[RMDB]
RNA sequence: GGGAACGACUCGAGUAGAGUCGAAAAGGGAGAGCCGAGCAGAGGCAUAGCGAACUGCGCACGGUGAAGCCUUGAGGGAAAGCCGUAGGACCCGGGUUCGAUUCCCGGCUGCUCCACCGAAGGGCCAAUGCAUACUACUCUUCGGAGUAGUAUGCAUAAAAGAAACAACAACAACAAC
Reactivity to DMS in 0.01 (KOAc 150mM, MgCl2 10mM, bicine 150mM(pH8.5), 24C), signal-to-noise 5, nucleotides 027 to 126: g030g000g020a120g000a250g010c000c030g010a150g010c060a050g000a120g010g020c090a090u020a120g010c080g010a080a130c030u010g010c040g040c090a140c020g000g000u000g000a130a260g010c000c040u000u010g000a250g000g000g000a050a140a170g000c010c070g000u010a100g000g020a080c130c020c010g010g000g000u000u030c160g000a300u040u000c020c010c000g010g020c130u020g000c060u000c060c020a180c030c050g000a140a100g010g000g010c020c060a090
Reactivity to 2A3 in 0.01 (KOAc 150mM, MgCl2 10mM, bicine 150mM(pH8.5), 24C), signal-to-noise 4, nucleotides 027 to 126: g050g010g000a140g020a000g040c000c010g000a020g030c010a000g020a060g090g080c050a070u140a030g030c030g060a090a050c020u030g010c010g000c060a050c060g020g020u070g060a050a030g030c000c020u030u080g020a120g000g020g030a010a030a080g030c020c040g050u070a030g050g110a080c010c000c010g010g000g000u040u090c040g020a100u060u080c000c000c000g000g010c000u060g000c010u030c020c000a030c020c000g020a030a050g000g010g000c000c010a030